[RMDB]
Source: RMDB library OK3TST, as collected in RNAgym. Structure probing data (DMS and 2A3) for a 207-nucleotide construct. The 2A3 profile rests on 4,029 reads. The DMS profile rests on 8,401 reads. Conditions: 150 mM KOAc, 10 mM MgCl2 and 150 mM bicine (pH 8.5), 24 C. For DMS the reverse transcriptase was MarathonRT.

RNA sequence: GGGAACGACUCGAGUAGAGUCGAAAAUAGACUAAACAUCCUGUGCUUAAAGUAGAUUGGGGAAUAGGGGUCAUUUUGUUCUUUAUCUUCUUGAUGAAUUAUAUUCUUGCUAUCAGGUAAAAUUAUUUGACCCAGACAGUACAACUGGUUAAACUGACGUAGUACUAUGAUUCGUCAUAGUACUACGAAAAGAAACAACAACAACAAC
Reactivity to DMS in 0.01 (KOAc 150mM, MgCl2 10mM, bicine 150mM(pH8.5), 24C), signal-to-noise 3, nucleotides 027 to 156: u000a100g000a190c040u010a120a080a120c040a200u010c020c040u000g010u000g010c030u000u000a060a070a130g010u000a080g000a120u000u000g010g000g000g010a070a110u000a080g010g000g030g040u000c030a010u000u000u000u000g000u000u000c070u010u000u000a040u010c000u000u000c040u000u000g010a100u000g010a060a050u000u000a110u010a300u000u000c030u000u000g010c080u000a060u000c040a040g000g000u000a030a030a050a080u000u000a140u010u000u000g010a090c040c000c020a120g010a050c030a090g010u000a080c060a080a080c060u000g010g020u000u010a040a070a110c040u000g000a280
Reactivity to 2A3 in 0.01 (KOAc 150mM, MgCl2 10mM, bicine 150mM(pH8.5), 24C), signal-to-noise 5, nucleotides 027 to 156: u090a020g080a030c050u130a070a060a050c030a070u060c010c020u030g040u080g050c020u140u110a160a080a040g010u050a060g040a120u060u090g020g000g000g040a040a040u080a100g040g000g020g020u020c010a010u060u060u040u070g030u050u070c020u030u080u030a040u020c030u110u000c020u050u070g010a030u030g020a070a070u240u090a080u080a050u150u090c050u050u080g070c040u050a050u140c020a000g000g020u030a030a040a050a040u090u070a040u070u060u030g010a000c000c010c020a010g040a020c030a010g040u090a040c020a110a060c090u080g010g030u060u080a080a060a010c020u080g030a020